[RMDB]
RNA sequence: GGGAACGACUCGAGUAGAGUCGAAAACAGCCUUUGAAGGAAAAUUAAACAAGUAUCUCAUUACAGAAUGCUUCACUGGUCCCCGGAGGUGGCCACAGACGCAGUGGAUUUAAUGAGCUGGGAACGUCAAUGCUGCCAAAGUUUACCUCGACCUGUAAAAUCAUACUACCUUCGGGUAGUAUGAUUUAAAAGAAACAACAACAACAAC
Reactivity to 2A3 in 0.01 (KOAc 150mM, MgCl2 10mM, bicine 150mM(pH8.5), 24C), signal-to-noise 2, nucleotides 027 to 156: c030a000g020c000c000u000u000u060g050a050a090g060g020a240a120a050a020u190u260a160a160a130c110a120a110g040u040a160u010c030u010c040a060u160u040a050c000a080g110a160a110u040g000c010u020u000c050a020c040u020g020g050u090c050c000c000c000g070g000a020g020g100u010g000g000c000c000a070c010a040g020a020c010g010c070a020g010u020g000g020a030u010u120u170a190a150u140g030a030g000c040u000g020g030g090a100a010c000g020u020c030a000a130u090g000c010u000g000c020c070a070a030a010g010u020u090u040a030c000c010u020c050g080a040c020c020u090g050u080a020
Reactivity to DMS in 0.01 (KOAc 150mM, MgCl2 10mM, bicine 150mM(pH8.5), 24C), signal-to-noise 1, nucleotides 027 to 156: c040a130g050c020c040u010u040u010g000a120a060g020g000a050a100a100a170u000u000a100a060a110c040a070a140g010u000a090u010c090u000c050a080u010u000a110c110a090g000a110a050u000g020c010u000u000c020a080c040u010g010g000u000c050c000c030c040g000g020a160g050g050u000g020g010c020c030a030c050a090g010a060c050g030c010a080g070u010g000g000a140u000u020u000a080a110u000g010a300g000c060u000g010g000g000a060a120c020g020u000c040a020a100u010g040c010u000g030c000c020a040a080a120g010u000u010u000a110c030c030u010c020g000a170c070c020u000g000u000a130